[RMDB]
RNA sequence: GGGAACGACUCGAGUAGAGUCGAAAACAGGACUCCUAGUUGAACACAUCUGGAAAGAUGGAUGAUACAGGGUGAUAGUCCCGAAGACGAAAGGAGAGAAAGACCGACCUCAACACCUGAGUAGGACGGACGAUUAUAUCUUCGGAUAUAAUCGUCCAAAAGAAACAACAACAACAAC
Reactivity to 2A3 in 0.01 (KOAc 150mM, MgCl2 10mM, bicine 150mM(pH8.5), 24C), signal-to-noise 7, nucleotides 027 to 126: c040a030g070g050a050c010u020c010c000u040a090g010u010u040g020a040a000c070a000c000a040u000c000u000g050g130a110a050a040g000a030u000g020g030a060u050g000a000u090a110c040a060g000g000g040u060g070a130u120a040g040u010c000c000c000g010a050a010g120a010c050g110a230a020a030g040g000a040g020a000g040a060a040a010g090a030c010c020g050a090c020c010u050c020a050a050c040a050c040c040u040g040a020g050u110a030g030g070a020c050
Reactivity to DMS in 0.01 (KOAc 150mM, MgCl2 10mM, bicine 150mM(pH8.5), 24C), signal-to-noise 5, nucleotides 027 to 126: c060a170g030g020a110c070u010c000c000u000a190g010u030u000g000a200a100c300a050c000a010u010c020u010g000g080a180a120a010g000a020u020g000g000a060u020g010a230u000a050c050a160g000g000g010u000g010a170u040a010g020u000c000c020c030g000a110a060g000a060c070g010a080a120a020g010g020a090g000a120g000a080a070a070g000a170c060c030g000a120c110c020u000c020a000a120c140a080c080c040u000g000a050g000u000a170g000g000a160c210

The record gives the reactivity of an RNA of 177 nucleotides to 2A3 and DMS. Reactivities are given for positions 27 through 126. For DMS the reverse transcriptase was MarathonRT. It was measured as part of the RMDB library OK1LIB. The reactions ran in a buffer of 150 mM KOAc, 10 mM MgCl2 and 150 mM bicine (pH 8.5), at 24 C. Reactivities are rounded to 0.1 and cut off at 0 and 3.